Chemical mapping of a 177-nucleotide RNA with DMS and 2A3.
[RMDB]
RNA sequence: GGGAACGACUCGAGUAGAGUCGAAAAGUUUCACUGUGUUAGCCAGGACGGCCUCGAUCUCCUGACCUCGUGAUCCACCCUCCUCCACCUCCCAAAGUACUGGGAUUACAGGCAUGAGCCACUGCACCGAUGUGAUAGUUUUCGAACUAUCACAUCGAAAAGAAACAACAACAACAAC
Reactivity to DMS in 0.01 (KOAc 150mM, MgCl2 10mM, bicine 150mM(pH8.5), 24C), signal-to-noise 5, nucleotides 027 to 126: g000u000u000u000c020a100c070u020g030u000g010u000u020a090g010c040c020a080g010g010a130c100g000g000c040c030u000c080g000a080u010c040u000c020c030u000g000a060c070c020u000c060g020u010g000a070u000c020c040a180c040c020c020u000c010c000u000c010c060a130c080c080u000c000c010c010a030a070a110g010u000a080c090u010g000g010g000a070u000u000a060c100a050g020g000c050a060u000g010a110g010c030c010a050c060u000g000c070a100c100
Reactivity to 2A3 in 0.01 (KOAc 150mM, MgCl2 10mM, bicine 150mM(pH8.5), 24C), signal-to-noise 3, nucleotides 027 to 126: g020u010u030u050c040a030c070u110g020u010g050u200u170a030g030c020c020a030g050g030a050c060g030g010c020c030u060c050g100a190u000c010u020c020c000u040g070a100c000c000u030c010g020u030g030a020u000c020c000a040c040c010c000u020c000c000u000c000c000a040c000c010u050c000c000c010a030a080a010g110u060a090c080u040g000g030g010a010u030u110a050c040a020g030g000c020a050u120g030a020g020c000c010a040c050u070g020c020a060c070
DMS adducts were read by reverse transcription with MarathonRT.